[RMDB]
RNA sequence: GGGAACGACUCGAGUAGAGUCGAAAAGAUAUGGACAUGAAUGACAUGAGCAGUCGGAAACGAUGGGCUCAACAGCAUUAUGUCCUAAGUCAAAAGCCAAGACUAACGUUCGCGUUAGUCUUGGCAAUCCCCGUAGGAUGUUCGCAUCCUACGGGGAAAAAGAAACAACAACAACAAC
Reactivity to 2A3 in 0.01 (KOAc 150mM, MgCl2 10mM, bicine 150mM(pH8.5), 24C), signal-to-noise 1, nucleotides 027 to 126: g030a000u060a050u090g000g000a000c010a000u120g300a130a060u030g070a040c200a140u070g020a010g000c020a000g000u000c020g010g070a040a030a020c010g020a010u050g080g300g070c000u010c000a070a090c040a030g030c000a010u010u010a010u030g010u060c000c000u030a060a010g030u040c070a080a040a000a110g000c020c000a000a020g020a020c000u000a010a000c010g100u070u120c300g000c000g200u000u040a000g000u000c010u010u000g000g000c000a040a000
Reactivity to DMS in 0.01 (KOAc 150mM, MgCl2 10mM, bicine 150mM(pH8.5), 24C), signal-to-noise 1, nucleotides 027 to 126: g000a000u000a300u010g000g000a020c000a000u000g000a020a050u000g000a110c030a210u000g000a020g040c000a300g020u000c010g000g000a140a110a080c000g010a020u000g020g000g020c000u000c010a020a080c300a140g000c000a000u000u000a020u000g000u010c000c000u020a060a080g000u010c030a020a130a030a140g010c000c000a030a010g000a000c000u000a000a020c000g060u000u030c300g070c030g030u000u000a000g040u020c000u000u000g000g010c000a020a020